[RMDB]
RNA sequence: GGGAACGACUCGAGUAGAGUCGAAAAACGCUGGUACGCCAGCGAUCUCAGACAUCUCGGGGAUCAUCAUGUCACGAGAUACCAGUGUGCACUUGUGACAGAUUGAUAACUGAAAGGUCUGGGAGAAAACUUGGUGACUUUUCGAAGUCACCAAGUUAAAAGAAACAACAACAACAAC
Reactivity to DMS in 0.01 (KOAc 150mM, MgCl2 10mM, bicine 150mM(pH8.5), 24C), signal-to-noise 2, nucleotides 027 to 126: a050c000g020c000u000g000g000u000a100c180g030c040c030a010g000c000g020a050u000c020u010c000a000g010a010c000a050u000c090u010c000g020g020g010g020a020u000c010a020u010c050a180u010g010u000c000a000c000g000a010g000a060u010a120c010c060a270g000u070g020u050g020c160a140c000u000u000g020u000g020a050c010a030g000a080u020u060g000a030u000a020a000c000u000g020a000a080a070g000g010u000c010u000g000g000g000a020g010a110a040
Reactivity to 2A3 in 0.01 (KOAc 150mM, MgCl2 10mM, bicine 150mM(pH8.5), 24C), signal-to-noise 5, nucleotides 027 to 126: a000c040g000c000u010g010g010u090a060c280g060c050c010a000g000c000g000a010u010c000u000c000a000g000a000c000a030u080c050u000c030g010g000g000g000a000u010c000a000u000c050a110u030g000u000c000a010c010g010a010g010a030u080a130c010c050a170g130u100g090u140g280c050a030c060u010u000g000u000g000a000c010a010g000a020u120u230g010a000u000a000a010c000u000g010a030a050a040g050g000u000c000u000g000g020g000a020g040a010a120

An RNA of 177 nucleotides, treated with DMS and 2A3 and read out base by base.
DMS (dimethyl sulfate) methylates the pairing face of unpaired adenines and cytosines.
The 2A3 profile rests on 3,899 reads.
It was measured as part of the RMDB library RFM100.
Conditions: 150 mM KOAc, 10 mM MgCl2 and 150 mM bicine (pH 8.5), 24 C.